[RMDB]
RNA sequence: GGGAACGACUCGAGUAGAGUCGAAAAGGCGCGCGCCGUGACCUCCCACCGUCGGGGCGUCUGGCGGUUCGGUGGGCCAACGGGGCCGUGACCGGUAAAUGCGCUCCCUUGGCCGAUCGCGGAUGGACAGCGUAGCCUAUUUCGAUAGGCUACGCUGAAAAGAAACAACAACAACAAC
Reactivity to DMS in 0.01 (KOAc 150mM, MgCl2 10mM, bicine 150mM(pH8.5), 24C), signal-to-noise 2, nucleotides 027 to 126: g020g000c050g010c080g030c040g010c020c000g030u010g010a080c080c030u010c040c000c030a100c030c060g010u000c040g020g010g000g000c220g020u010c030u010g020g000c050g010g000u000u000c040g040g010u000g020g010g010c010c000a030a020c240g000g000g020g010c040c030g010u000g010a130c040c040g030g000u000a030a080a070u000g010c070g000c030u000c000c000c050u000u000g030g020c000c020g000a060u010c020g010c100g000g000a120u010g000g010a300
Reactivity to 2A3 in 0.01 (KOAc 150mM, MgCl2 10mM, bicine 150mM(pH8.5), 24C), signal-to-noise 1, nucleotides 027 to 126: g080g000c030g000c010g000c000g030c100c000g040u070g060a080c010c020u010c040c030c000a030c020c000g080u050c010g000g010g030g270c090g100u040c020u010g040g000c010g020g000u110u010c010g000g010u030g040g000g000c000c000a010a010c030g030g000g040g000c000c010g040u030g050a130c050c060g040g010u150a120a160a050u100g060c040g010c030u000c000c030c000u030u000g030g020c000c010g070a040u020c020g040c010g000g080a160u130g070g040a030